[RMDB]
RNA sequence: GGGAACGACUCGAGUAGAGUCGAAAAAUGUGAUGUUUGCAUUACUUUUAACUGCUAUGUAUAAAGGAAAGUGUGUCUUUUGACUUCAUCAGUUAUUUCUCUUGUGCACAGAGAAAAAUGCAUUAAACUGUUGUGUUCAAUUCGUUGAACACAACAGAAAAGAAACAACAACAACAAC
Reactivity to DMS in 0.01 (KOAc 150mM, MgCl2 10mM, bicine 150mM(pH8.5), 24C), signal-to-noise 2, nucleotides 027 to 126: a070u010g020u000g000a090u010g030u010u010u000g020c020a020u010u000a100c110u000u020u000u000a050a040c030u020g000c140u010a100u000g010u020a090u010a030a050a080g000g000a030a050a100g040u000g010u000g010u010c010u000u000u030u010g000a110c080u000u000c050a050u010c080a060g000u000u010a040u000u000u010c000u000c010u010u010g000u010g020c110a050c180a060g000a060g010a000a020a060a050a060u000g000c070a010u000u000a070a070a130
Reactivity to 2A3 in 0.01 (KOAc 150mM, MgCl2 10mM, bicine 150mM(pH8.5), 24C), signal-to-noise 1, nucleotides 027 to 126: a020u100g070u080g060a110u110g120u010u110u110g050c010a030u080u000a120c030u040u110u100u070a080a070c020u020g080c040u130a010u060g050u050a120u050a180a090a000g070g020a100a000a130g090u120g010u020g070u070c000u040u110u090u110g050a080c030u040u030c070a140u010c030a040g020u030u020a010u000u020u000c010u000c000u020u080g090u100g100c060a040c020a070g120a020g070a100a000a000a000a000u060g020c000a000u000u210a080a080a010
Structure probing data (DMS and 2A3) for a 177-nucleotide construct. Values cover nucleotides 27 to 126. The reactions ran in a buffer of 150 mM KOAc, 10 mM MgCl2 and 150 mM bicine (pH 8.5), at 24 C. Reactivities are rounded to 0.1 and cut off at 0 and 3. It was measured as part of the RMDB library OK2TST.